[RMDB]
Description: An RNA of 177 nucleotides, treated with 2A3 and DMS and read out base by base. Reactivities are given for positions 27 through 126.
RNA sequence: GGGAACGACUCGAGUAGAGUCGAAAAAUACUAUUCAUAGAUGUCGGUAGUGUCCGAAUGAGGAAUAGAUCCAGUAUUAAAUAUGACCAAUAGUUCAAUUGAUACUAGUACUAGGUGAUUUACAUACACAAUGGAAUCAGUUCGCUGAUUCCAUUGUAAAAGAAACAACAACAACAAC
Reactivity to 2A3 in 0.01 (KOAc 150mM, MgCl2 10mM, bicine 150mM(pH8.5), 24C), signal-to-noise 3, nucleotides 027 to 126: a000u080a040c000u020a010u010u030c020a020u050a070g190a110u160g050u030c000g060g060u060a140g260u130g090u150c020c000g000a010a010u030g000a040g090g000a000a010u010a020g000a030u000c040c000a020g000u020a020u080u060a040a110a030u150a090u190g070a010c020c020a080a110u030a100g030u050u050c060a120a270u140u100g060a020u060a120c010u020a060g100u020a090c070u060a060g070g000u020g010a010u010u020u010a030c040a010u020a040c060
Reactivity to DMS in 0.01 (KOAc 150mM, MgCl2 10mM, bicine 150mM(pH8.5), 24C), signal-to-noise 3, nucleotides 027 to 126: a090u000a140c000u000a020u000u000c000a050u010a110g010a200u010g000u000c000g000g000u000a130g040u010g010u000c000c000g000a020a030u000g000a190g010g000a030a000u000a010g000a090u000c020c010a100g000u000a010u000u000a030a040a040u000a070u010g020a070c040c030a090a080u000a070g010u010u000c020a160a110u000u020g010a060u010a020c070u000a040g000u010a070c230u010a070g010g010u000g000a050u000u000u010a060c170a060u000a040c050

Notes:
Reactivities are rounded to 0.1 and cut off at 0 and 3.